Source information
The record gives the reactivity of an RNA of 177 nucleotides to 2A3 and DMS. For 2A3, 790 sequencing reads were counted. Reactivities are given for positions 27 through 126. The reactions ran in a buffer of 150 mM KOAc, 10 mM MgCl2 and 150 mM bicine (pH 8.5), at 24 C. It was measured as part of the RMDB library OK1LIB.
RNA sequence: GGGAACGACUCGAGUAGAGUCGAAAACACGAAGGUUGGCUAAUCCUGGUCGGACAUCAGGCGGUUAGUGCAUUGGCAUAAGCCACCUUGGCGCUAAUAGAUACUAAUCGUAGCAUAGCUGAAUAAAACGCAUAUGGCGAUUCGUCGCCAUAUGCGUAAAAGAAACAACAACAACAAC
Reactivity to 2A3 in 0.01 (KOAc 150mM, MgCl2 10mM, bicine 150mM(pH8.5), 24C), signal-to-noise 2, nucleotides 027 to 126: c230a000c020g110a140a070g190g040u210u100g010g000c000u040a000a080u000c000c000u080g030g020u010c070g030g110a090c130a080u060c000a010g050g000c000g020g000u000u000a000g000u000g000c010a030u000u000g000g000c020a090u030a220a000g020c010c030a000c000c210u060u110g060g000c010g030c000u040a070a000u040a200g090a080u010a040c000u000a000a000u070c030g020u090a020g070c000a010u010a060g050c000u010g020a050a010u160a090a060a000
Reactivity to DMS in 0.01 (KOAc 150mM, MgCl2 10mM, bicine 150mM(pH8.5), 24C), signal-to-noise 1, nucleotides 027 to 126: c010a100c190g000a070a100g000g000u010u000g000g000c000u000a080a060u070c000c080u000g000g100u020c100g020g000a190c070a030u040c000a110g020g050c060g000g000u030u010a060g050u000g000c000a000u000u000g000g000c010a230u020a080a250g000c010c050a010c240c050u070u000g000g000c000g110c070u000a000a000u000a220g000a020u000a000c080u000a040a090u000c000g000u000a030g090c130a080u000a050g000c060u010g000a120a050u050a000a120a120